[RMDB]
RNA sequence: GGGAACGACUCGAGUAGAGUCGAAAAGCGGCAACACAAGAGUUUGAUUGCGUGGAGGCGCCACCGUCGCUUGAAUCAAACUAUGCAUGUGGCAGACACGCAAACAGGGAAUCGCACCGGAUUAUUAGACUACUAGGGUAUUCGUACCCUAGUAGUCAAAAGAAACAACAACAACAAC
Reactivity to 2A3 in 0.01 (KOAc 150mM, MgCl2 10mM, bicine 150mM(pH8.5), 24C), signal-to-noise 2, nucleotides 027 to 126: g030c020g020g010c010a130a000c030a080c050a090a080g050a070g080u030u080u160g080a040u000u040g020c020g000u030g010g040a090g040g120c130g040c050c010a030c010c040g190u170c110g010c020u000u070g060a040a040u170c070a040a020a100c040u090a070u270g010c030a040u090g010u000g060g000c010a000g030a070c020a010c020g000c020a000a010a010c040a040g060g000g080a100a000u050c010g030c060a020c030c000g040g000a030u050u090a050u170u120a140
Reactivity to DMS in 0.01 (KOAc 150mM, MgCl2 10mM, bicine 150mM(pH8.5), 24C), signal-to-noise 4, nucleotides 027 to 126: g030c040g030g000c060a060a100c110a090c140a100a130g010a090g010u010u010u000g010a100u000u000g020c030g030u000g010g000a110g000g000c120g000c020c030a040c050c180g010u000c080g010c010u000u020g010a080a110u010c130a030a070a070c070u010a050u000g010c080a100u000g020u000g010g000c030a080g020a130c000a050c020g000c030a020a010a080c080a060g000g010g010a080a030u010c060g010c050a150c050c040g000g020a080u010u000a130u000u000a180